[RMDB]
RNA sequence: GGGAACGACUCGAGUAGAGUCGAAAAAUCGAAUAUGAGGUGUAUGAAACAAUCUCGGAAAAAUGCCAAGGUUAUUACUGACUACUAUGUGGACAUGAAGUUCAAGGUAAGAGCAAGUCAAAAACUACUGUAUUGCUUUCAGUGGCUUCUGCGUGGGCUAGCUGCAAACAUUCGUGUUUGCAGCUAGAAAAGAAACAACAACAACAAC
Reactivity to 2A3 in 0.01 (KOAc 150mM, MgCl2 10mM, bicine 150mM(pH8.5), 24C), signal-to-noise 3, nucleotides 027 to 156: a000u080c020g020a070a030u090a050u110g020a010g020g010u020g010u060a120u140g090a060a030a050c060a050a090u040c020u020c000g060g010a100a020a070a020a040u110g010c040c020a030a060g030g020u050u050a080u110u080a080c040u040g070a030c000u000a000c020u030a060u200g070u040g020g030a000c010a060u110g070a080a070g020u040u030c070a040a030g010g030u080a090a010g030a000g030c030a060a010g020u110c090a070a090a000a120a130c070u170a060c050u050g030u070a110u110u090g060c010u010u060u060c010a040g030u010g030g000c000u000u020c020u020g040c020g020u090g000g000g000
Reactivity to DMS in 0.01 (KOAc 150mM, MgCl2 10mM, bicine 150mM(pH8.5), 24C), signal-to-noise 2, nucleotides 027 to 156: a100u010c090g000a220a070u000a110u000g000a040g060g050u020g040u000a070u020g000a220a100a090c080a050a040u020c050u010c050g000g000a000a070a130a100a100u010g010c010c010a020a060g010g010u030u000a030u000u000a160c130u010g000a100c070u000a080c060u010a070u010g050u030g000g010a080c010a090u000g000a120a120g000u010u000c010a060a040g020g010u000a030a080g010a080g010c020a060a000g000u010c070a040a020a010a100a060c050u000a030c030u000g010u000a130u000u000g000c060u000u000u000c100a040g010u000g010g020c020u000u000c040u000g040c050g040u010g030g030g040